This 207-nucleotide RNA was probed chemically with 2A3 and DMS.

RNA sequence: GGGAACGACUCGAGUAGAGUCGAAAAGCGAAUAUCAGGAAGUCGCAACAAAGGAUACAGCUAACAACAUUGCCAAACGUCAAAUGGCGAAUGUCAACAUGGUUCGCUACAUGGCUAAAGGUCGUGGUAUUCAGGAACGUCAGAAGUUCGACGAGGAUAUUGCCUCUAAGUUCGCUUAGAGGCAAUAAAAAGAAACAACAACAACAAC
Reactivity to 2A3 in 0.01 (KOAc 150mM, MgCl2 10mM, bicine 150mM(pH8.5), 24C), signal-to-noise 7, nucleotides 027 to 156: g040c020g040a040a000u080a050u200c050a030g080g070a060a030g050u050c020g010c050a010a060c040a040a100a010g030g000a010u040a090c040a030g040c050u090a070a030c060a040a010c010a060u020u080g000c000c010a110a080a040c060g050u070c040a060a070a090u110g000g000c010g030a010a010u040g050u140c050a050a030c020a210u170g070g010u010u020c010g000c010u030a060c010a080u080g020g000c000u050a110a040a060g030g010u030c020g040u020g040g010u040a050u050u050c020a030g050g050a060a020c010g010u010c020a050g020a210a030g090u070u050c040g010a020c030g000a020g000g020a020
Reactivity to DMS in 0.01 (KOAc 150mM, MgCl2 10mM, bicine 150mM(pH8.5), 24C), signal-to-noise 4, nucleotides 027 to 156: g010c040g040a080a060u000a200u010c080a100g010g010a090a130g000u000c060g030c070a090a080c080a060a040a090g020g000a140u000a090c070a070g010c060u010a090a090c080a100a040c010a080u000u000g020c000c010a040a070a160c180g040u000c050a050a160a140u000g010g000c010g020a030a030u010g010u000c050a060a080c090a070u000g030g020u000u010c070g010c010u000a050c050a130u010g000g000c050u000a040a120a110g010g000u000c050g070u000g020g000u010a030u000u000c060a120g010g000a050a040c030g000u000c020a090g010a100a130g030u000u010c010g010a110c020g010a130g020g010a160

The reactions ran in a buffer of 150 mM KOAc, 10 mM MgCl2 and 150 mM bicine (pH 8.5), at 24 C.